[RMDB]
RNA sequence: GGGAACGACUCGAGUAGAGUCGAAAAUAUGCAGCAACAGCAUUUUCAGUACACUCUCUUGCUACAAUAGUUACAAUAGUUUUCUGUCUCAUAUACCUGACCUUCAAGUUUUGCUCAUGGUUAGUGACAUUGCUGGUGUUUUCGAACACCAGCAAUGAAAAGAAACAACAACAACAAC
Reactivity to 2A3 in 0.01 (KOAc 150mM, MgCl2 10mM, bicine 150mM(pH8.5), 24C), signal-to-noise 2, nucleotides 027 to 126: u130a020u010g000c020a040g040c040a030a090c020a050g020c010a030u000u000u100u090c040a030g000u020a030c020a000c060u000c010u000c020u000u070g040c000u030a030c040a090a140u040a170g130u100u030a070c030a060a080u050a090g040u080u080u040u000c040u020g060u000c020u040c080a030u090a020u020a210c000c010u020g030a040c000c020u000u130c050a070a060g000u050u060u190u190g040c020u010c000a000u070g000g070u030u050a050g040u000g090a030
Reactivity to DMS in 0.01 (KOAc 150mM, MgCl2 10mM, bicine 150mM(pH8.5), 24C), signal-to-noise 3, nucleotides 027 to 126: u000a050u000g010c010a040g010c060a060a070c120a060g020c040a030u000u010u000u000c050a060g010u000a070c130a040c020u000c030u000c020u000u010g030c020u020a060c080a080a090u000a070g010u010u000a080c070a090a060u000a080g000u000u010u000u000c050u000g010u000c040u000c070a110u020a100u010a100c090c010u010g010a040c040c040u000u010c120a060a060g000u000u010u010u010g020c090u000c070a050u010g010g020u000u000a080g030u000g010a150
This 177-nucleotide RNA was probed chemically with 2A3 and DMS. Conditions: 150 mM KOAc, 10 mM MgCl2 and 150 mM bicine (pH 8.5), 24 C. It was measured as part of the RMDB library OK2TST. 2A3 is a SHAPE reagent: it acylates the 2'-hydroxyl of flexible nucleotides of all four kinds. The 2A3 profile rests on 1,571 reads. For DMS, 2,289 sequencing reads were counted.